[RMDB]
RNA sequence: GGGAACGACUCGAGUAGAGUCGAAAAGGGUUCUGGCUUGGCCAACAAUUAUUACAAGGAAAACCAUGAAAACACUGGUUGUGGCUCUUGGGGGCAACGCCUUACUCCAGCGCGGUGAGGCGCUGACGUAUCAGCAUAACUUCGGUUAUGCUGAUACAAAAGAAACAACAACAACAAC
Reactivity to 2A3 in 0.01 (KOAc 150mM, MgCl2 10mM, bicine 150mM(pH8.5), 24C), signal-to-noise 3, nucleotides 027 to 126: g040g010g010u030u070c030u040g050g000c030u060u090g020g030c010c000a020a020c010a030a010u150u140a070u110u140a110c030a050a040g080g000a090a110a040a030c030c010a020u070g000a040a090a060a010c080a020c070u030g030g020u030u040g060u050g070g000c000u010c010u080u030g030g000g030g000g000c010a030a000c040g040c010c020u000u020a030c020u010c040c030a070g030c040g010c020g030g070u080g040a050g040g070c010g000c030u010g010a030c050
Reactivity to DMS in 0.01 (KOAc 150mM, MgCl2 10mM, bicine 150mM(pH8.5), 24C), signal-to-noise 4, nucleotides 027 to 126: g000g000g020u000u010c060u020g020g000c040u010u010g020g010c000c030a090a110c120a070a060u010u010a100u020u000a110c120a090a110g000g010a080a050a060a040c010c010a010u010g000a090a080a080a110c150a070c150u000g020g010u000u000g020u010g020g000c060u000c060u010u000g000g010g010g010g000c030a020a050c080g010c000c010u000u000a030c030u000c040c030a080g000c120g030c100g020g000u010g010a080g000g020c000g010c030u000g000a080c200